[RMDB]
RNA sequence: GGGAACGACUCGAGUAGAGUCGAAAAGAUGAUUCAGGUUGUACACCAUAGUUAAUCAAGUCGGUCAUGAUCUUGUCACGCGUUCCGAUAACUGUACCGAUUGUGGCCACACCACGUUGAAUCAACUCAUCAGCGUUACCACGCCAAACGUCAGUACGGUACGUGCUAGAUUCGUCUAGCACGUACCAAAAGAAACAACAACAACAAC
Reactivity to DMS in 0.01 (KOAc 150mM, MgCl2 10mM, bicine 150mM(pH8.5), 24C), signal-to-noise 1, nucleotides 027 to 156: g000a110u000g030a100u000u000c100a160g040g000u010u010g040u010a030c050a030c010c080a120u000a180g070u000u020a060a190u000c050a070a200g000u000c060g070g000u000c040a100u010g010a050u020c120u000u000g070u000c060a000c050g000c120g030u010u010c000c130g090a140u000a080a070c180u000g020u060a040c070c050g000a120u000u010g030u000g040g000c020c000a080c070a120c000c020a040c020g000u010u010g030a060a060u020c010a110a090c100u020c060a180u020c060a040g040c010g010u010u000a120c060c000a020c300g010c020c040a070a040a150c040g010u010c100a040g010u000a050c080
Reactivity to 2A3 in 0.01 (KOAc 150mM, MgCl2 10mM, bicine 150mM(pH8.5), 24C), signal-to-noise 3, nucleotides 027 to 156: g020a030u090g000a010u000u000c010a040g050g030u080u050g060u070a010c020a060c080c010a070u130a080g100u100u170a120a080u100c160a110a020g030u030c040g020g000u000c030a030u040g030a010u020c030u110u140g070u140c060a040c090g110c080g040u090u050c040c020g070a060u050a160a100c040u090g040u100a030c020c030g040a030u000u040g020u000g030g000c010c000a020c000a000c040c000a010c020g030u020u060g010a010a010u050c040a030a100c020u050c090a120u020c030a030g020c000g000u030u040a090c060c060a050c000g080c080c040a060a030a020c060g110u110c060a040g100u190a070c110